[RMDB]
RNA sequence: GGGAACGACUCGAGUAGAGUCGAAAAAUGGUACUUUCAUAUUAUGAAUUGCCGAAGUUAGAGUUGCGAAAUUUGGUGGUUAUACUAGGCGCCAUAGACUGACCACUUGCGCCAUAUUCGACACGGAAAUGGUAGUGGUGUUCGCACCACUACCAUUAAAAGAAACAACAACAACAAC
Reactivity to DMS in 0.01 (KOAc 150mM, MgCl2 10mM, bicine 150mM(pH8.5), 24C), signal-to-noise 2, nucleotides 027 to 126: a040u100g030g000u000a040c190u030u000u000c030a010u020a180u040u080a090u000g000a010a010u010u000g020c000c000g010a080a120g000u000u010a070g000a220g000u020u000g010c000g000a150a060a060u010u000u000g000g000u020g000g030u010u000a070u010a060c100u000a090g000g000c030g020c050c150a070u010a030g040a120c090u000g010a070c080c080a090c020u000u020g030c050g000c030c000a090u010a070u030u000c090g010a070c070a070c070g010g010a050
Structure probing data (DMS) for a 177-nucleotide construct. The RNA was probed in 150 mM KOAc, 10 mM MgCl2 and 150 mM bicine (pH 8.5) at 24 C. The data come from the RNA Mapping Database (RMDB), library OK1LIB.